[RMDB]
RNA sequence: GGGAACGACUCGAGUAGAGUCGAAAAGAUAGCAGCCUAGUUGCUGCUCGUCCCUCUUAGUCCUCCUGCCGACUAAGACUGGACGUCAUUAUGCAGGGAACUACUUUAGGGGUGUCUCGACUUGAAGUAGAUUAAUUGGGACUGGCUAAGCAUAGAGGUAUAGACUGUGGUUCGCCACAGUCUAUACAAAAGAAACAACAACAACAAC
Reactivity to DMS in 0.01 (KOAc 150mM, MgCl2 10mM, bicine 150mM(pH8.5), 24C), signal-to-noise 2, nucleotides 027 to 156: g010a170u000a070g000c020a030g050c020c020u020a130g020u020u000g020c010u010g020c000u000c050g030u000c010c000c170u010c020u020u000a000g000u010c030c030u010c040c030u000g010c020c300g010a050c010u010a010a020g000a070c180u010g040g000a100c090g040u000c120a080u000u000a150u000g020c000a050g030g000g010a120a170c010u000a030c030u000u000u000a000g020g000g000g000u000g020u000c010u000c000g010a050c000u010u000g020a020a030g000u000a010g010a160u000u000a040a090u000u000g080g010g000a080c040u010g010g000c000u010a050a130g030c050a100u000a090g010a250g000
Reactivity to 2A3 in 0.01 (KOAc 150mM, MgCl2 10mM, bicine 150mM(pH8.5), 24C), signal-to-noise 4, nucleotides 027 to 156: g140a050u120a010g000c010a000g000c010c030u300a160g040u230u210g010c010u010g000c000u010c000g000u010c010c000c000u010c000u000u000a000g000u000c000c020u060c000c020u100g000c020c030g000a000c000u000a010a020g000a010c050u040g030g040a010c020g110u090c060a090u060u300a090u300g000c010a000g010g000g010a020a030c000u010a000c000u030u000u010a010g000g010g010g000u070g000u010c000u010c010g010a020c000u000u010g010a020a010g010u000a000g020a080u150u300a030a020u190u070g000g000g020a000c010u010g060g000c030u030a040a150g030c020a080u120a130g070a000g070

An RNA of 207 nucleotides, treated with DMS and 2A3 and read out base by base. DMS adducts were read by reverse transcription with MarathonRT. For DMS, 3,369 sequencing reads were counted. The reactions ran in a buffer of 150 mM KOAc, 10 mM MgCl2 and 150 mM bicine (pH 8.5), at 24 C.